[RMDB]
RNA sequence: GGGAACGACUCGAGUAGAGUCGAAAAGGUAAGUUCUGGGGGAAACGCGUAAUGACCAUUAAAGCUGGUGACAUUACGUAAGGUAGGUAUCAGUAAAACUUUACUGAUAGAAGGGAUACUAGUGGCAUACUUAGCGAUUCUUCGGAAUCGCUAAGUAAAAAGAAACAACAACAACAAC
Reactivity to 2A3 in 0.01 (KOAc 150mM, MgCl2 10mM, bicine 150mM(pH8.5), 24C), signal-to-noise 2, nucleotides 027 to 126: g050g010u090a030a030g120u060u170c140u170g000g050g000g000g000a060a180a080c070g000c000g000u000a000a010u010g030a090c030c030a000u000u190a180a070a000g090c030u000g000g000u000g080a070c000a000u000u000a000c000g000u030a020a020g030g030u100a030g000g000u000a000u000c000a000g040u040a000a050a060a140c050u100u100u050a010c000u000g000a000u000a020g020a070a080g000g000g000a010u020a060c060u100a070g080u060g080g040c000a050
Reactivity to DMS in 0.01 (KOAc 150mM, MgCl2 10mM, bicine 150mM(pH8.5), 24C), signal-to-noise 5, nucleotides 027 to 126: g010g000u020a090a080g000u020u010c070u010g000g000g000g000g000a080a080a050c190g010c000g000u000a000a000u000g000a060c010c000a010u010u030a110a090a190g030c300u000g010g030u000g020a150c010a010u000u000a010c010g010u000a060a050g000g010u000a080g010g010u000a000u000c000a020g000u000a010a020a180a160c300u030u000u000a010c000u000g000a010u000a020g000a080a080g000g000g000a110u010a080c090u010a080g030u010g000g000c120a160
Chemical mapping of a 177-nucleotide RNA with 2A3 and DMS.
The reactions ran in a buffer of 150 mM KOAc, 10 mM MgCl2 and 150 mM bicine (pH 8.5), at 24 C.
For 2A3, 965 sequencing reads were counted.
2A3 adducts were read by reverse transcription with SuperScript II with manganese.
In probing experiments dimethyl sulfate is read out at A N1 and C N3, which are open when not base-paired.
It was measured as part of the RMDB libraries RFM100 and RFMREP.